Background:
An RNA of 177 nucleotides, treated with 2A3 and DMS and read out base by base. The RNA was probed in 150 mM KOAc, 10 mM MgCl2 and 150 mM bicine (pH 8.5) at 24 C. 2A3 adducts were read by reverse transcription with SuperScript II with manganese. The DMS profile rests on 695 reads.
RNA sequence: GGGAACGACUCGAGUAGAGUCGAAAAGCAAACCUUUUGAACAAUCCUUGAAGCAAUAAUGAAAAUGUUAUACAUCGAAGGAUACGAUGAAUAGGGAUAAAAGUGGUCAAAAUUAACUUCAAUACCGGAUGAUACCUCAGUUCGCUGAGGUAUCAUCAAAAGAAACAACAACAACAAC
Reactivity to 2A3 in 0.01 (KOAc 150mM, MgCl2 10mM, bicine 150mM(pH8.5), 24C), signal-to-noise 2, nucleotides 027 to 126: g030c030a020a030a270c010c020u020u070u020u050g010a030a020c010a070a050u000c000c000u030u100g000a050a030g010c030a040a120u140a100a020u190g130a080a030a120a030u090g020u070u030a120u000a000c010a000u040c000g020a030a030g150g080a120u120a140c040g000a040u020g000a000a050u070a070g010g000g050a010u100a080a080a020a030g140u170g110g010u120c020a050a040a080a040u200u100a070a070c080u130u070c050a120a120u120a160c160c000g060
Reactivity to DMS in 0.01 (KOAc 150mM, MgCl2 10mM, bicine 150mM(pH8.5), 24C), signal-to-noise 1, nucleotides 027 to 126: g000c050a050a040a140c160c060u000u000u000u000g060a050a040c130a150a050u020c000c030u010u000g020a000a080g040c030a050a050u030a010a060u000g000a070a060a190a050u000g000u000u000a050u020a110c010a060u000c060g000a050a040g010g010a030u000a180c050g040a070u010g000a030a100u000a060g000g000g000a030u000a050a050a120a130g040u010g000g000u000c060a010a010a050a030u000u000a020a050c070u020u000c010a030a060u000a100c040c010g010